[RMDB]
RNA sequence: GGGAACGACUCGAGUAGAGUCGAAAAUUGAUAAUUUGUUGUGUCACUUCAUUUAAAUGAAUUGAAACAAAUUUAAUACAAGUGGAUGUAGGAUAACCGUCCGUCCUUUACAUUGGUAUAAAAGUGAACGACACAGACCUCUUCGGAGGUCUGUGAAGUGAGAUCUUAAGUUCGCUUAAGAUCUCACAAAAGAAACAACAACAACAAC
Reactivity to DMS in 0.01 (KOAc 150mM, MgCl2 10mM, bicine 150mM(pH8.5), 24C), signal-to-noise 2, nucleotides 027 to 156: u000u010g000a130u010a070a070u000u000u000g010u000u000g010u000g000u000c020a050c060u000u000c020a050u000u000u000a110a120a050u020g000a080a070u000u000g030a140a080a090c020a050a060a070u010u000u000a060a120u040a080c040a080a040g010u000g020g000a080u000g020u020a050g010g010a030u000a040a210c080c090g000u000c050c020g000u000c010c000u000u000u000a050c030a150u000u010g000g040u000a050u000a050a020a040a080g000u000g010a060a060c040g020a270c020a030c010a050g000a010c000c010u010c030u000u010c300g040g000a020g000g030u000c000u000g000u000g000a020a080
Reactivity to 2A3 in 0.01 (KOAc 150mM, MgCl2 10mM, bicine 150mM(pH8.5), 24C), signal-to-noise 3, nucleotides 027 to 156: u080u040g030a030u030a190a040u020u030u050g000u020u000g080u020g040u050c000a020c010u030u000c030a090u070u160u300a150a230a040u050g020a020a020u070u060g020a060a040a010c030a020a090a060u120u140u150a080a020u120a050c050a070a050g040u040g080g030a040u080g060u100a030g030g030a030u010a120a060c020c010g030u030c000c000g010u020c020c000u050u080u080a070c050a110u050u100g090g020u080a060u040a180a070a000a010g070u050g070a050a050c030g070a000c000a000c000a000g000a000c010c000u000c030u020u020c100g080g010a010g000g000u000c000u000g000u000g000a000a000